[RMDB]
RNA sequence: GGGAACGACUCGAGUAGAGUCGAAAAGGAGCUCGAUGCUAGAAUAUUCCAUAACCUUAUGGAAAAGCUACUUUACGUUAGUAGAGUAGCUACAGGAUAAGGUUAUCCUGAAUUCUAGCAUCGAGGAGAUAGGUUUGAUAUUCGUGUCAGGUCUAUCAAAAGAAACAACAACAACAAC
Reactivity to 2A3 in 0.01 (KOAc 150mM, MgCl2 10mM, bicine 150mM(pH8.5), 24C), signal-to-noise 9, nucleotides 027 to 126: g080g010a050g030c000u000c000g000a000u000g000c000u000a000g000a010a010u030a040u020u000c000c000a000u000a020a030c020c010u020u010a000u000g050g000a010a020a010a000g000c000u000a000c000u000u000u000a000c010g120u060u100a040g000u010a000g000a000g000u000a000g000c000u000a000c000a000g010g000a000u000a010a010g120g000u020u000a000u010c000c010u010g010a000a000u000u000c000u000a000g000c000a000u000c000g000a000g000g000a010
Reactivity to DMS in 0.01 (KOAc 150mM, MgCl2 10mM, bicine 150mM(pH8.5), 24C), signal-to-noise 8, nucleotides 027 to 126: g010g010a150g010c010u000c000g010a010u000g000c000u000a000g000a010a010u010a060u010u000c020c140a010u000a010a080c100c090u010u000a010u000g000g000a030a030a060a020g010c000u000a010c000u000u000u000a000c010g010u040u080a100g010u000a000g000a000g000u000a000g000c000u000a000c030a060g000g000a010u000a010a080g010g010u010u000a010u000c050c050u000g000a090a020u000u000c000u000a000g010c000a000u000c000g010a000g010g010a070
An RNA of 177 nucleotides, treated with 2A3 and DMS and read out base by base. For 2A3 the reverse transcriptase was SuperScript II with manganese.